[RMDB]
Chemical mapping of a 177-nucleotide RNA with DMS. The reactions ran in a buffer of 150 mM KOAc, 10 mM MgCl2 and 150 mM bicine (pH 8.5), at 24 C. It was measured as part of the RMDB library OK2TRN.
RNA sequence: GGGAACGACUCGAGUAGAGUCGAAAAUAUGCACACGACGUUGCCGCCGUUCAAUGAUGUGCUUGUAUACUUGCUGAGGAAGGUUGAUUCUGAGGUGACUGAUGAAGAGGCAAUGAUUCAAAUCCGCCCUACGGGGCCAAUUCGUUGGCCCCGUAGGAAAAGAAACAACAACAACAAC
Reactivity to DMS in 0.01 (KOAc 150mM, MgCl2 10mM, bicine 150mM(pH8.5), 24C), signal-to-noise 1, nucleotides 027 to 126: u000a040u010g010c010a050c070a020c070g010a150c060g000u000u000g000c040c020g030c130c070g050u020u000c160a160a050u010g010a100u000g000u010g000c020u050u010g030u010a100u000a040c060u000u000g030c010u000g010a220g040g010a080a080g000g000u000u010g000a110u010u000c040u000g010a230g030g030u000g030a120c080u000g030a070u000g010a110a070g040a080g000g020c020a030a110u000g010a110u010u010c040a050a010a110u000c030c120g040c220

DMS adducts were read by reverse transcription with MarathonRT.